[RMDB]
RNA sequence: GGGAACGACUCGAGUAGAGUCGAAAACGCUGACCGGCGCUUGCGGAGCGCUUGCCGCGGCCUGCGGGGAGUACAGCGGCGGAUCCAGCAGGACGGUGUACUCGCGCAGCAGGCGGCCGUUCGGCCAGCCCGACUAAAUAUUCGUAUUUAGUCGGGCAAAAGAAACAACAACAACAAC
Reactivity to 2A3 in 0.01 (KOAc 150mM, MgCl2 10mM, bicine 150mM(pH8.5), 24C), signal-to-noise 2, nucleotides 027 to 126: c040g010c020u020g000a020c020c020g000g010c020g000c020u020u030g020c020g160g140a210g030c020g000c000u040u120g020c020c000g070c020g100g110c010c030u030g010c030g020g130g040g000a020g050u110a080c030a110g080c040g060g010c040g100g000a080u070c050c020a020g060c010a010g070g020a020c000g000g120u050g020u060a110c040u050c090g010c000g030c030a020g000c000a000g000g040c000g090g110c000c000g000u000u020c010g010g030c000c020a030
Reactivity to DMS in 0.01 (KOAc 150mM, MgCl2 10mM, bicine 150mM(pH8.5), 24C), signal-to-noise 2, nucleotides 027 to 126: c160g000c000u000g000a060c060c000g010g010c000g020c030u000u020g010c020g020g010a190g010c000g010c010u000u000g010c210c030g020c010g020g020c110c090u010g000c010g000g000g000g020a070g010u010a040c070a090g010c030g000g020c040g010g010a180u000c020c050a120g000c060a100g020g000a060c010g000g000u010g050u010a040c010u000c030g020c010g030c010a160g000c000a030g010g000c010g010g040c010c030g000u010u010c000g010g000c020c130a130
An RNA of 177 nucleotides, treated with 2A3 and DMS and read out base by base. The RNA was probed in 150 mM KOAc, 10 mM MgCl2 and 150 mM bicine (pH 8.5) at 24 C. It was measured as part of the RMDB library OK2TRN. The DMS profile rests on 2,710 reads. For 2A3 the reverse transcriptase was SuperScript II with manganese.